Structure probing data (2A3) for a 177-nucleotide construct.
It was measured as part of the RMDB library OK1LIB.
Reactivities are given for positions 27 through 126.
Conditions: 150 mM KOAc, 10 mM MgCl2 and 150 mM bicine (pH 8.5), 24 C.
RNA sequence: GGGAACGACUCGAGUAGAGUCGAAAAUGUGACUUAGUGGAACUCAGGGGACUCCCACCUGGUAGUAGGGCUAUCGGGUGCAUGUUGAAAUUUCGAAGCCCGUGGUCACGGCUCUUUCCAUGCUCCGGAGACGUUCUUGGUUCGCCAAGAACGUCUCAAAAGAAACAACAACAACAAC
Reactivity to 2A3 in 0.01 (KOAc 150mM, MgCl2 10mM, bicine 150mM(pH8.5), 24C), signal-to-noise 1, nucleotides 027 to 126: u270g000u000g000a010c000u040u110a060g040u100g200g000a130a000c030u030c120a000g000g000g000g110a020c010u100c080c000c000a020c000c000u000g000g000u000a010g000u000a000g060g200g000c060u010a060u240c030g000g020g000u090g070c200a180u180g190u090u120g070a190a100a040u290u180u050c100g090a000a000g020c000c030c010g060u060g020g020u100c040a040c060g000g000c030u040c000u000u000u000c070c050a070u090g000c020u180c100c060g000